[RMDB]
RNA sequence: GGGAACGACUCGAGUAGAGUCGAAAACAGUACUUGUCGUCUUGGCCCCCAUGUAGAAGCUGAGAUGGCUGCUAUCUGCAGUAGUCGGAAGUCCAUCUUGCGUCUCGUUUCGGCCGCAUGUGUUGCCGGAUGUAUUCCUCUUCGGAGGAAUACAUCCAAAAGAAACAACAACAACAAC
Reactivity to 2A3 in 0.01 (KOAc 150mM, MgCl2 10mM, bicine 150mM(pH8.5), 24C), signal-to-noise 5, nucleotides 027 to 126: c030a010g050u080a050c040u070u100g050u080c050g020u000c050u050u040g030g000c040c000c000c020c020a080u100g060u080a040g020a170a020g010c050u070g010a020g000a060u030g020g030c000u040g030c000u060a180u300c020u140g000c020a040g040u140a040g080u190c050g020g040a050a000g030u000c020c020a060u050c020u040u030g030c010g050u000c020u020c050g030u010u040u020c010g020g000c000c010g050c000a050u100g060u050g030u070u080g070c030c030
Reactivity to DMS in 0.01 (KOAc 150mM, MgCl2 10mM, bicine 150mM(pH8.5), 24C), signal-to-noise 2, nucleotides 027 to 126: c050a100g000u000a050c060u020u000g010u000c040g020u010c050u000u020g010g000c080c020c050c100c100a130u020g010u020a030g020a070a090g010c020u000g050a050g020a000u000g010g000c100u020g020c050u040a080u030c070u020g040c040a150g010u030a020g000u000c030g010g010a090a060g000u000c000c030a070u000c010u010u000g040c010g000u000c000u000c030g020u000u000u000c100g000g020c000c010g030c020a050u020g010u040g010u000u000g010c100c060
Overview: Structure probing data (2A3 and DMS) for a 177-nucleotide construct. Conditions: 150 mM KOAc, 10 mM MgCl2 and 150 mM bicine (pH 8.5), 24 C. For DMS, 2,673 sequencing reads were counted. Source: RMDB library OK1LIB, as collected in RNAgym. The 2A3 profile rests on 2,986 reads.